[RMDB]
RNA sequence: GGGAACGACUCGAGUAGAGUCGAAAAACACACACACACUCAAGUAAAGCUAGCCCAGUGUUUGAUUUGAAGCCCACAUCCAGCUGAAAGUGGGGUUACACUUUAUAAACUAAUAAAGAGCAAGAUUCUGCUUUGACUUGGUAAAACAUUAAAUAGGACUGAUAUAGGAGUUCGCUCCUAUAUCAGUAAAAGAAACAACAACAACAAC
Reactivity to 2A3 in 0.01 (KOAc 150mM, MgCl2 10mM, bicine 150mM(pH8.5), 24C), signal-to-noise 2, nucleotides 027 to 156: a000c040a000c000a000c000a000c010a010c020a020c050u080c050a060a000g010u050a170a050a040g010c020u040a010g100c000c040c030a030g000u020g020u030u060u030g120a180u050u090u150g070a060a030g030c000c020c000a020c000a010u060c030c030a060g060c060u120g050a090a030a000g010u000g000g010g000g000u000u000a040c060a000c000u000u090u000a100u080a110a140a020c030u020a020a070u100a130a120a030g070a000g010c010a060a020g020a080u110u000c010u050g000c020u060u030u050g060a020c000u020u050g000g030u060a020a030a100a030c030a070u220u230a040a160a050u090a070g050g030
Reactivity to DMS in 0.01 (KOAc 150mM, MgCl2 10mM, bicine 150mM(pH8.5), 24C), signal-to-noise 2, nucleotides 027 to 156: a030c030a080c050a050c070a100c050a080c060a070c040u020c040a070a200g050u010a110a070a090g030c010u000a140g000c020c010c000a180g050u020g010u020u000u040g000a130u000u000u010g010a050a150g020c000c020c020a050c070a100u000c040c040a090g010c030u010g030a040a070a080g020u000g010g000g010g030u000u000a060c080a090c020u000u000u000a100u010a060a110a270c090u000a080a070u000a050a040a040g000a040g040c000a060a150g010a050u000u000c030u010g000c000u010u000u000g000a050c050u000u040g020g020u010a100a050a100a090c080a120u000u000a050a050a080u000a110g000g000